[RMDB]
RNA sequence: GGGAACGACUCGAGUAGAGUCGAAAAGUUAUGCUCUCGCUGCCUAAUGGCGGUGCGGGAAAGCCACUCUAAAGUCCUUAGGGUUAGCCCCUUAAGGCGGGGUUCGGAGGCACCUGGCAACAGAAGCUGAAACUGUGCACAUUCGUGUGCACAGUAAACAUGGCUGAAACUUCGGUUUCAGCCAUGUAAAAGAAACAACAACAACAAC
Reactivity to 2A3 in 0.01 (KOAc 150mM, MgCl2 10mM, bicine 150mM(pH8.5), 24C), signal-to-noise 1, nucleotides 027 to 156: g090u160u070a170u270g020c000u050c000u050c000g000c020u010g000c000c050u300a300a260u200g030g010c060g080g080u080g010c120g000g000g020a040a040a010g000c000c010a050c000u120c080u060a210a120a000g300u060c000c000u000u000a000g020g000g040u050u080a050g040c000c080c000c010u070u040a000a000g000g000c000g000g010g000g020u000u200c060g100g050a100g010g000c000a000c000c000u110g120g000c000a000a000c000a000g000a000a000g050c000u050g000a070a000a000c000u020g000u000g000c000a050c000a060u000u120c150g190u020g000u020g000c000a020c000a000g000u000a000a000